[RMDB]
RNA sequence: GGGAACGACUCGAGUAGAGUCGAAAAAGCGGAGGACUGAAGAAACUCCGGUUUCUUCUUUCACUCUGUAGCUGGAAUCCUUGUUGCGCUUGCUGGCGAAACCUGCAGGAAGCUAGCUGGGUCCGCUAGUCGAGCGACUCGUCCCAGCGUCCCAACCGCUUAAUUACUACUUCGGUAGUAAUUAAGCAAAAGAAACAACAACAACAAC
Reactivity to 2A3 in 0.01 (KOAc 150mM, MgCl2 10mM, bicine 150mM(pH8.5), 24C), signal-to-noise 4, nucleotides 027 to 156: a000g030c000g010g000a000g000g000a000c010u010g000a010a000g010a000a010a000c020u050c110c040g030g010u000u000u000c000u000u000c000u010u020u010c110a220c130u000c000u010g030u020a020g000c000u010g020g010a060a090u110c010c020u030u070g030u080u120g140c010g000c000u000u010g000c010u010g000g000c010g020a200a080a040c000c010u070g010c020a030g070g180a250a050g150c130u110a050g000c070u210g040g000g010u020c030c020g000c010u010a020g060u200c090g000a000g000c010g020a010c010u010c020g060u070c030c000c000a000g000c000g040u010c000c000c010a010a060c070c050
Reactivity to DMS in 0.01 (KOAc 150mM, MgCl2 10mM, bicine 150mM(pH8.5), 24C), signal-to-noise 1, nucleotides 027 to 156: a130g050c010g020g030a000g010g000a070c010u000g000a000a010g000a050a040a030c000u010c300c300g100g000u000u000u000c000u000u000c010u000u000u000c010a100c020u010c010u000g060u010a100g020c070u010g000g010a070a060u010c070c010u020u020g050u010u000g030c000g040c070u000u010g020c020u000g000g000c000g020a020a030a200c000c020u000g040c060a200g040g000a170a210g000c120u000a140g070c010u000g000g000g000u000c060c010g000c010u010a020g010u000c160g030a120g030c060g010a010c020u000c050g010u000c030c000c000a020g000c010g000u000c020c010c000a120a150c140c090